[RMDB]
Chemical mapping of a 177-nucleotide RNA with DMS and 2A3. It was measured as part of the RMDB library OK2TRN.
RNA sequence: GGGAACGACUCGAGUAGAGUCGAAAAUGUUCAACAAGGUGUUAGUGACAGGACAAUGGAUAUCUUUUGUUCUGUUUAGCAACUUAAGUAUAUGGAGAUUCUUUUUGAACAGAUCAUUUCCAAUUAGUGUACAAACAUGUUUCGACAUGUUUGUACAAAAAGAAACAACAACAACAAC
Reactivity to DMS in 0.01 (KOAc 150mM, MgCl2 10mM, bicine 150mM(pH8.5), 24C), signal-to-noise 4, nucleotides 027 to 126: u010g000u000u000c010a040a070c230a040a020g020g010u000g010u000u000a040g020u010g010a010c010a000g000g000a010c000a010a000u010g000g010a220u010a120u010c020u000u000u010u000g010u000u010c010u000g010u000u000u000a040g000c020a030a070c010u010u010a040a130g010u010a080u010a130u010g010g010a170g000a100u000u000c010u000u000u000u000u000g000a020a020c060a040g000a100u020c120a160u000u000u010c000c010a100a130u000u000a110g010
Reactivity to 2A3 in 0.01 (KOAc 150mM, MgCl2 10mM, bicine 150mM(pH8.5), 24C), signal-to-noise 4, nucleotides 027 to 126: u020g000u000u000c020a030a020c030a060a000g040g010u020g020u080u050a080g060u050g120a010c000a000g010g000a000c010a010a010u020g010g040a110u090a100u300c000u030u040u010u010g000u030u000c000u000g000u020u010u000a010g000c000a000a050c020u100u070a130a040g130u020a130u060a100u300g150g030a100g020a130u130u190c000u040u030u020u030u040g010a000a010c000a010g010a030u140c030a040u050u030u000c000c000a000a060u100u110a110g110
DMS adducts were read by reverse transcription with MarathonRT. Reactivities are given for positions 27 through 126.